[RMDB]
RNA sequence: GGGAACGACUCGAGUAGAGUCGAAAAGCUGCUGAUGCCCAAGUUGACCGUUUGAUCACAGGUAGACUUGCCGCGCUCAAUUCUUUUGUUACUCAAACUCUUACUAGACAAACUCAGGUUAGGGCUAGUAGAGAACUUGCUAUGCAAAAAAUUAAUGCCACUCGACAAUGUUCGCAUUGUCGAGUGGAAAAGAAACAACAACAACAAC
Reactivity to 2A3 in 0.01 (KOAc 150mM, MgCl2 10mM, bicine 150mM(pH8.5), 24C), signal-to-noise 1, nucleotides 027 to 156: g070c060u160g000c000u080g000a120u080g150c020c060c020a030a000g000u040u000g090a060c060c160g030u020u280u230g100a070u090c080a030c040a130g000g000u020a000g010a040c010u040u020g000c030c090g040c000g030c000u010c040a070a120u070u000c030u030u100u000u000g040u160u060a080c010u000c000a120a170a300c070u000c000u030u050a010c000u000a010g000a020c040a090a210a000c030u050c280a180g020g230u090u060a090g010g300g000c000u000a000g000u000a000g000a000g000a090a020c000u000u000g000c000u000a000u120g000c030a000a000a000a000a000a080u140u250a130a040u280g020